This 177-nucleotide RNA was probed chemically with DMS and 2A3. The RNA was probed in 150 mM KOAc, 10 mM MgCl2 and 150 mM bicine (pH 8.5) at 24 C. 2A3 adducts were read by reverse transcription with SuperScript II with manganese. Reactivities are given for positions 27 through 126. High 2A3 reactivity points to a flexible backbone, as in loops and unpaired stretches.
RNA sequence: GGGAACGACUCGAGUAGAGUCGAAAAGUUGCCUUUGAGACCGAUGUGAGAGGUUCGUAUUGCUGCGGGGUAAAAACUUUGUGUUUUUUCGAAUUAUUUGAUCUGUGCAGUAUGAGUAUUCCGCGGCGUGUAUUAUUAUAUUCGUAUAAUAAUACACAAAAGAAACAACAACAACAAC
Reactivity to DMS in 0.01 (KOAc 150mM, MgCl2 10mM, bicine 150mM(pH8.5), 24C), signal-to-noise 5, nucleotides 027 to 126: g000u010u020g000c070c010u000u020u010g010a120g010a100c030c020g010a100u020g000u030g010a090g010a080g000g010u020u010c030g020u010a050u020u020g010c010u010g030c010g010g000g010g030u020a020a020a030a080a030c030u000u020u020g010u010g010u000u020u010u010u010u020c020g010a080a130u040u030a100u020u010u020g000a060u010c060u010g020u000g010c010a030g000u000a020u000g000a060g010u010a060u020u000c000c010g010c020g000g000c050
Reactivity to 2A3 in 0.01 (KOAc 150mM, MgCl2 10mM, bicine 150mM(pH8.5), 24C), signal-to-noise 7, nucleotides 027 to 126: g050u060u070g090c010c000u090u050u100g100a070g030a070c000c020g060a110u080g080u150g120a100g010a030g110g020u040u040c020g010u080a060u060u230g000c020u030g020c000g020g000g010g050u060a040a030a000a010a040c030u090u110u090g060u040g060u050u060u020u000u050u010c010g010a060a030u190u060a110u170u180u170g040a040u040c030u030g060u040g030c010a010g010u080a030u040g020a010g020u020a050u050u020c020c010g010c010g020g000c020